The record gives the reactivity of an RNA of 207 nucleotides to 2A3. Conditions: 150 mM KOAc, 10 mM MgCl2 and 150 mM bicine (pH 8.5), 24 C. The 2A3 profile rests on 583 reads. For 2A3 the reverse transcriptase was SuperScript II with manganese.

[RMDB]
RNA sequence: GGGAACGACUCGAGUAGAGUCGAAAAUCUAGGGUUCCGCUUGUCAAUUGACAUGGACUGGUCCGAGAGAAAACACAUACGCGUAAAUAGAAGCGCGUAUGCACACGGAGGGAAAAAAGCCCGGGAGAAUGGGAUUAUUAGUUCGCUAAUAAUCCAAUCCGUAAAUGUUGUUCGCAACAUUUACGGAAAAAGAAACAACAACAACAAC
Reactivity to 2A3 in 0.01 (KOAc 150mM, MgCl2 10mM, bicine 150mM(pH8.5), 24C), signal-to-noise 1, nucleotides 027 to 156: u010c000u000a010g000g000g000u020u000c000c000g010c000u000u010g000u000c040a140a300u190u300g000a020c010a040u000g040g120a170c030u070g020g000u010c010c000g000a010g000a010g010a020a060a020a020c050a020c000a010u010a000c000g040c010g090u090a050a300a150u210a300g170a300a060g000c020g000c000g000u000a000u000g020c010a010c000a010c040g000g000a020g020g000g000a000a240a040a000a030a230g000c000c000c000g010g120g010a010g030a030a080u200g090g020g010a000u000u010a000u000u000a010g040u050u050c180g000c130u000a010a010u000a000a000u000c000c000a000a020